RNA sequence: GGGAACGACUCGAGUAGAGUCGAAAAAGAAGAGCCGGUUGGCGUCAGAAGGACAAAUCCUAAGGGCAGCUACGUCGAUCUACGGGGCUCCAGGACAGGCAGAGCCACCCCAAGCCUUCAUAGACGAGUAUUCCUCGUAUUUCGAUACGAGGAAUACAAAAGAAACAACAACAACAAC
Reactivity to 2A3 in 0.01 (KOAc 150mM, MgCl2 10mM, bicine 150mM(pH8.5), 24C), signal-to-noise 6, nucleotides 027 to 126: a000g160a020a020g040a010g030c020c010g060g020u090u120g020g040c010g030u040c040a040g090a130a060g090g000a030c050a070a080a050u070c010c010u080a030a080g030g030g010c040a030g010c030u040a030c050g030u050c020g050a090u000c020u060a030c050g020g000g050g000c020u000c000c020a020g010g030a040c020a050g030g040c020a020g010a010g110c000c020a040c020c000c000c010a040a030g010c010c010u040u060c050a090u050a060g080a060c050g000a010
Reactivity to DMS in 0.01 (KOAc 150mM, MgCl2 10mM, bicine 150mM(pH8.5), 24C), signal-to-noise 4, nucleotides 027 to 126: a060g000a110a070g010a140g020c040c030g000g010u010u020g000g000c050g010u000c070a050g000a090a020g010g000a050c140a050a090a080u020c020c020u000a060a080g000g000g000c090a100g000c030u010a050c050g000u000c050g010a130u000c030u040a070c110g020g000g010g000c000u000c040c040a110g000g020a060c170a090g000g000c040a060g000a140g000c020c040a100c030c020c030c080a080a120g010c040c020u000u020c020a050u030a070g000a010c110g000a150